RNA sequence: GGGAACGACUCGAGUAGAGUCGAAAAUUAAAUGGUAGCAACGGUUCCAAAGGAGCCGAAGUUCAAAGGUAAAGCAUCGAUCUAAAAUGCUACCAAAAAGGUAACGAGCUUGGCAAUGAACAAAAAAGUACUGUUGUCAGUUCGCUGACAACAGUACAAAAGAAACAACAACAACAAC
Reactivity to DMS in 0.01 (KOAc 150mM, MgCl2 10mM, bicine 150mM(pH8.5), 24C), signal-to-noise 1, nucleotides 027 to 126: u000u040a070a050a160u000g010g000u000a000g030c010a200a300c030g000g000u000u060c000c010a110a240a200g010g000a000g000c000c000g010a070a050g010u000u000c010a030a020a160g000g030u000a070a010a080g030c030a020u000c060g020a050u000c080u000a080a080a130a110u000g000c000u000a030c000c000a000a030a070a070a070g000g020u020a090a150c040g000a020g010c080u040u000g010g050c070a040a190u000g000a010a070c040a000a070a100a040a080a100
The record gives the reactivity of an RNA of 177 nucleotides to DMS. For DMS, 548 sequencing reads were counted. Source: RMDB library M2PK90, as collected in RNAgym.